[RMDB]
Description
The record gives the reactivity of an RNA of 177 nucleotides to 2A3 and DMS. For DMS the reverse transcriptase was MarathonRT. The DMS profile rests on 2,552 reads. As a SHAPE reagent, 2A3 marks flexible, mostly unpaired nucleotides at the ribose 2'-OH.
RNA sequence: GGGAACGACUCGAGUAGAGUCGAAAAUUCGGUCGUGGCCAGAAUGGAGGCAACGAUGAAACACUUCCCUUUAAAAGUUGCGUCACUAACCUUGAAGAAAGGGACAACUAUUGGUAGGCAGUUUGGGCUAUGCUGAUUACUUCGGUAAUCAGCAUAGAAAAGAAACAACAACAACAAC
Reactivity to 2A3 in 0.01 (KOAc 150mM, MgCl2 10mM, bicine 150mM(pH8.5), 24C), signal-to-noise 1, nucleotides 027 to 126: u000u050c020g040g010u000c010g030u040g040g030c030c000a030g150a210a220u300g150g080a050g040g000c010a010a000c000g040a030u050g020a000a080a000c080a040c070u010u000c000c000c000u000u090u050a090a080a010a000g020u090u030g040c080g050u030c000a010c000u040a100a060c000c030u010u020g020a050a010g070a180a040a010g000g000g020a020c010a050a030c020u080a040u160u070g090g000u040a070g010g000c010a020g030u000u030u090g020g040g080
Reactivity to DMS in 0.01 (KOAc 150mM, MgCl2 10mM, bicine 150mM(pH8.5), 24C), signal-to-noise 3, nucleotides 027 to 126: u010u000c020g040g050u000c020g040u000g000g010c010c010a120g010a170a180u010g020g010a170g000g010c000a020a010c020g020a030u000g020a050a060a070c150a100c210u000u000c000c000c010u000u000u000a060a080a090a090g000u000u000g000c070g010u000c040a100c120u000a060a130c020c000u000u000g020a180a120g000a090a020a040g010g010g000a060c100a050a070c070u000a080u000u010g000g000u000a040g000g010c020a040g010u000u000u000g020g020g000